[RMDB]
RNA sequence: GGGAACGACUCGAGUAGAGUCGAAAACGAUCGGGAUCGCAUUGACCCCAAAAAAUUUCGCCGACACCAAUACCCCACGGAUGAUGCGGUUGACAGCCAAUUCAACUAACAUCGGCAUCACCGCUACUACUGGACUCAUCUUCGGAUGAGUCCAGUAAAAAGAAACAACAACAACAAC
Reactivity to 2A3 in 0.01 (KOAc 150mM, MgCl2 10mM, bicine 150mM(pH8.5), 24C), signal-to-noise 3, nucleotides 027 to 126: c010g060a070u120c050g000g000g000a040u000c050g020c190a140u070u200g110a110c020c010c020c050a120a060a000a030a000a050u100u160u010c060g000c040c010g030a010c000a000c060c010a030a010u070a110c030c000c000c070a020c000g030g040a130u030g000a000u070g000c000g000g020u070u070g040a030c040a050g020c030c040a030a070u100u070c050a130a130c030u130a030a030c030a170u110c060g020g040c010a000u020c000a000c010c010g000c000u040a020c030
Reactivity to DMS in 0.01 (KOAc 150mM, MgCl2 10mM, bicine 150mM(pH8.5), 24C), signal-to-noise 1, nucleotides 027 to 126: c140g010a140u110c190g070g000g000a080u000c000g000c150a170u160u000g000a060c000c000c020c040a000a150a000a000a000a170u020u090u000c050g000c020c000g000a010c180a010c050c000a000a300u000a050c000c000c010c000a050c000g000g040a000u040g000a000u000g010c000g000g000u000u070g000a040c030a000g060c140c130a120a040u110u000c290a020a020c170u000a060a060c160a100u050c180g050g060c000a280u000c010a000c000c050g020c150u110a000c060

This 177-nucleotide RNA was probed chemically with 2A3 and DMS. DMS adducts were read by reverse transcription with MarathonRT. High 2A3 reactivity points to a flexible backbone, as in loops and unpaired stretches. 2A3 adducts were read by reverse transcription with SuperScript II with manganese. Values cover nucleotides 27 to 126. The RNA was probed in 150 mM KOAc, 10 mM MgCl2 and 150 mM bicine (pH 8.5) at 24 C. It was measured as part of the RMDB library OK1LIB.